This 207-nucleotide RNA was probed chemically with 2A3. 2A3 adducts were read by reverse transcription with SuperScript II with manganese. The RNA was probed in 150 mM KOAc, 10 mM MgCl2 and 150 mM bicine (pH 8.5) at 24 C.

[RMDB]
RNA sequence: GGGAACGACUCGAGUAGAGUCGAAAAGCUGUGUGAUGAUGGUCCGGCACAUCAUCGUGUGAGGAGAGAUGCUCACACACACAGACGCCGGAAUAUGCUGUUGUGGUCUACAGCACAACAGCCUGUGCAUCUCUCCACAGGCGCAUAUAGAUGUAGACGUAGGUAGCUAGUUCGCUAGCUACCUACGAAAAGAAACAACAACAACAAC
Reactivity to 2A3 in 0.01 (KOAc 150mM, MgCl2 10mM, bicine 150mM(pH8.5), 24C), signal-to-noise 2, nucleotides 027 to 156: g070c050u050g000u070g070u050g130a070u040g010a010u010g010g030u040c010c010g010g010c010a010c000a050u010c000a040u020c030g050u060g020u060g060a140g050g000a060g000a010g000a030u070g030c000u000c020a080c000a030c010a000c000a000c000a020g160a060c050g000c010c000g000g130a010a020u240a010u080g010c010u000g010u000u000g000u010g040g000u020c020u020a010c010a010g000c000a000c000a030a000c000a000g020c000c020u110g010u040g000c020a040u020c010u000c000u010c040c000a010c020a020g030g010c060g050c140a010u150a020u090a160g130a130u030g000u000a000g000a020